[RMDB]
Chemical mapping of a 177-nucleotide RNA with 2A3 and DMS. The data come from the RNA Mapping Database (RMDB), library OK2TST. For 2A3 the reverse transcriptase was SuperScript II with manganese. The DMS profile rests on 930 reads.
RNA sequence: GGGAACGACUCGAGUAGAGUCGAAAAAACUUGCGUCUAAUUGAACUGUUGAAUUAACACGAUGCCUUUUAACGAUGCGAGAAACAACUACUUCAUCUGCAUAAGGUAAUGCAGCAUAUAACAGAGCCACAUAACUGAGCUUCGGCUCAGUUAUGUGAAAAGAAACAACAACAACAAC
Reactivity to 2A3 in 0.01 (KOAc 150mM, MgCl2 10mM, bicine 150mM(pH8.5), 24C), signal-to-noise 1, nucleotides 027 to 126: a000a010c030u020u030g000c030g000u000c030u030a010a100u070u050g020a070a080c080u020g030u050u070g080a210a210u220u070a180a000c060a000c140g050a060u040g020c000c010u040u050u070u040a050a060c070g000a000u000g000c050g030a000g000a040a050a030c070a010a030c020u140a040c000u150u070c040a110u060c030u030g070c010a030u060a110a060g160g020u050a060a040u010g000c010a000g020c030a130u170a010u030a160a050c030a010g060a010g090c010
Reactivity to DMS in 0.01 (KOAc 150mM, MgCl2 10mM, bicine 150mM(pH8.5), 24C), signal-to-noise 2, nucleotides 027 to 126: a090a060c040u000u000g000c030g010u000c020u010a100a140u010u000g010a100a120c090u000g000u040u000g000a110a050u000u000a080a080c110a030c120g030a090u010g010c050c000u000u000u000u020a070a220c170g000a020u020g040c090g010a000g010a080a040a050c150a090a120c140u010a070c070u020u020c090a050u020c000u010g000c070a040u000a050a010g010g010u010a010a030u000g010c000a000g000c300a040u010a090u010a060a050c110a070g020a230g010c220